[RMDB]
An RNA of 177 nucleotides, treated with 2A3 and DMS and read out base by base.
RNA sequence: GGGAACGACUCGAGUAGAGUCGAAAACCGUUGCCGUUCGCGGCAACGGGAAGCAAGCAAGGAGCGCAACGAGACAAGACGAUAAUGAGAUCGCGCAUGCUGAAAAGCCACGCUUCGGCGUGGCUAAGAUAUACAGGGCAUUCGUGCCCUGUAUAUCAAAAGAAACAACAACAACAAC
Reactivity to 2A3 in 0.01 (KOAc 150mM, MgCl2 10mM, bicine 150mM(pH8.5), 24C), signal-to-noise 4, nucleotides 027 to 126: c010c000g000u000u000g010c000c020g040u050u060c280g010c010g070g000c000a000a000c000g010g010g000a020a020g100c060a030a010g000c000a030a060g100g080a110g130c020g010c030a020a070c060g060a010g060a140c060a100a020g070a090c060g050a050u080a160a120u260g100a040g020a140u070c030g000c010g000c050a020u070g010c000u030g040a090a100a010a010g010c010c000a000c000g000c010u030u090c190g080g000c000g000u000g000g000c000u000a000a000
Reactivity to DMS in 0.01 (KOAc 150mM, MgCl2 10mM, bicine 150mM(pH8.5), 24C), signal-to-noise 5, nucleotides 027 to 126: c000c000g010u000u000g010c000c000g020u000u000c210g040c010g020g000c000a010a000c000g020g000g020a040a060g020c130a090a060g010c060a070a070g010g000a090g000c050g020c030a050a110c090g000a100g000a120c090a100a060g010a110c090g000a070u020a060a090u000g000a130g010a060u000c060g010c030g020c060a080u000g010c030u000g000a090a050a090a040g010c000c000a010c000g010c000u000u000c160g020g010c000g020u000g010g000c010u000a000a020

For DMS, 6,742 sequencing reads were counted. For DMS the reverse transcriptase was MarathonRT.